[RMDB]
Chemical mapping of a 177-nucleotide RNA with DMS and 2A3. DMS (dimethyl sulfate) methylates the pairing face of unpaired adenines and cytosines. It was measured as part of the RMDB libraries RFM100 and RFMREP. DMS adducts were read by reverse transcription with MarathonRT.

RNA sequence: GGGAACGACUCGAGUAGAGUCGAAAACCGGAGCAAAGCCUCGGCGCCUCGGGAUCGGCGAUCUUCCUAUCAGGUCGUUGGCGGGGUAAUGGCCCACCAAGCCGAAGACGGGUAGCGGGUGUGAGAGUUAGACUGCUAAAUUCGUUUAGCAGUCUAAAAAAGAAACAACAACAACAAC
Reactivity to DMS in 0.01 (KOAc 150mM, MgCl2 10mM, bicine 150mM(pH8.5), 24C), signal-to-noise 6, nucleotides 027 to 126: c010c010g020g000a110g030c070a060a090a140g020c030c020u010c050g000g030c040g010c030c020u000c080g010g010g000a080u020c040g000g000c030g000a030u000c010u000u010c060c060u000a070u030c150a060g000g020u000c050g000u010u020g010g020c020g000g020g000g000u000a070a090u010g010g000c010c010c030a080c040c040a060a190g010c000c010g000a050a070g010a160c110g000g000g000u000a040g000c070g010g000g000u010g000u010g000a070g000a120g030
Reactivity to 2A3 in 0.01 (KOAc 150mM, MgCl2 10mM, bicine 150mM(pH8.5), 24C), signal-to-noise 6, nucleotides 027 to 126: c000c000g040g030a090g020c080a080a090a050g020c010c000u050c020g100g000c030g020c000c020u070c030g020g020g040a070u040c010g040g000c030g050a050u020c030u060u080c010c000u080a080u220c090a040g020g020u030c020g060u050u030g030g020c040g000g000g010g000u040a090a090u110g080g020c010c000c000a020c000c010a040a010g030c010c010g010a030a000g070a020c030g010g000g020u030a020g010c030g010g010g000u040g000u050g040a130g000a000g020